[RMDB]
An RNA of 177 nucleotides, treated with 2A3 and DMS and read out base by base. For DMS the reverse transcriptase was MarathonRT. The 2A3 profile rests on 3,748 reads. The DMS profile rests on 2,582 reads. The reactions ran in a buffer of 150 mM KOAc, 10 mM MgCl2 and 150 mM bicine (pH 8.5), at 24 C. 2A3 adducts were read by reverse transcription with SuperScript II with manganese.

RNA sequence: GGGAACGACUCGAGUAGAGUCGAAAAAUAAAAAGAAAAAGACAAAUAAAAACCACAAUAGGAAUAGGAACAGUGGCUUUCCCUCCACUUAAAUCGAAGGGUAAGCAAAACCCAGGGAAAAAUAAAAGGAGUUUGUGACAUUCGUGUCACGAAUUCCAAAAGAAACAACAACAACAAC
Reactivity to 2A3 in 0.01 (KOAc 150mM, MgCl2 10mM, bicine 150mM(pH8.5), 24C), signal-to-noise 3, nucleotides 027 to 126: a000u130a010a050a020a000a010g120a040a090a030a020a000g120a020c020a010a260a050u200a080a180a030a020a000c000c020a020c030a050a070u100a180g030g020a040a130u060a100g050g000a070a030c040a070g000u010g020g000c020u000u010u000c000c000c000u020c010c000a010c000u140u150a000a070a070u070c050g060a060a040g030g010g000u030a020a050g120c050a070a020a030a000c010c000c040a000g060g000g000a040a100a010a010a070u120a030a060a050a060
Reactivity to DMS in 0.01 (KOAc 150mM, MgCl2 10mM, bicine 150mM(pH8.5), 24C), signal-to-noise 2, nucleotides 027 to 126: a080u060a060a090a080a110a130g000a060a080a090a070a090g040a020c080a040a090a080u010a080a050a140a110a060c070c020a050c090a050a090u020a080g000g010a090a060u050a080g000g010a040a040c300a030g020u000g000g000c050u010u020u020c000c020c010u020c010c020a040c040u000u000a040a040a090u010c080g000a220a050g000g030g010u000a030a050g060c140a080a050a050a020c020c000c000a040g010g000g000a010a030a100a060a110u010a040a050a110a080